[RMDB]
RNA sequence: GGGAACGACUCGAGUAGAGUCGAAAAACGUGGUGCUGGUACGCCAGCACCACGAUGCUUGCAUACUGCUUUGGCCAGGACCAAAACGUAUGCGAAGUGACGUCGAGCCGGUACGCCGGCUCGACGAUAGGGUUUUAAAGUUCGCUUUAAAACCCUAAAAAGAAACAACAACAACAAC
Reactivity to 2A3 in 0.01 (KOAc 150mM, MgCl2 10mM, bicine 150mM(pH8.5), 24C), signal-to-noise 1, nucleotides 027 to 126: a000c000g020u000g000g000u010g020c020u000g000g000u040a050c250g050c030c000a000g000c060a000c000c000a000c000g000a000u020g030c000u010u010g000c010a000u000a010c050u160g110c050u020u000u000g110g000c120c300a300g010g120a300c000c000a010a000a030a000c030g000u020a030u000g010c030g000a020a010g050u040g070a010c030g000u110c010g030a000g060c000c090g000g010u070a100c240g190c110c000g000g000c020u000c020g010a000c000g030a000

The data come from the RNA Mapping Database (RMDB), library RFM100. Chemical mapping of a 177-nucleotide RNA with 2A3. Values cover nucleotides 27 to 126. The 2A3 profile rests on 706 reads.